[RMDB]
RNA sequence: GGGAACGACUCGAGUAGAGUCGAAAAUAGCAGGACAUAGCCGUUAUGCGCGAAGCGGUGUAGCGUUACUUUGAUGGCGGUACUAUGAAUUGAUGCAAGGUGUGGAGCGACCUUAAACAGUUCUGGUUUGACGGCUUUCAGUUCGCUGAAAGCCGAAUCACACAGACUUCUUCGGAAGUCUGUGUGAAAAAGAAACAACAACAACAAC
Reactivity to 2A3 in 0.01 (KOAc 150mM, MgCl2 10mM, bicine 150mM(pH8.5), 24C), signal-to-noise 2, nucleotides 027 to 156: u090a000g000c000a010g040g050a020c000a010u020a000g010c010c000g020u030u040a070u140g070c050g000c010g030a100a020g080c050g060g010u060g050u100a020g010c000g020u050u110a080c080u190u190u210g060a070u120g010g000c010g000g020u060a040c010u010a000u070g000a100a040u070u080g070a020u060g050c030a010a000g020g000u040g040u090g040g000a010g000c000g000a000c010c000u070u160a110a010a000c020a000g000u000u000c030u020g020g100u030u070u150g050a030c000g010g000c000u010u000u000c000a010g010u000u110c160g010c110u020g010a000a000a050g000c000c000g000a000a000
Overview
The record gives the reactivity of an RNA of 207 nucleotides to 2A3. Values cover nucleotides 27 to 156. The reactions ran in a buffer of 150 mM KOAc, 10 mM MgCl2 and 150 mM bicine (pH 8.5), at 24 C.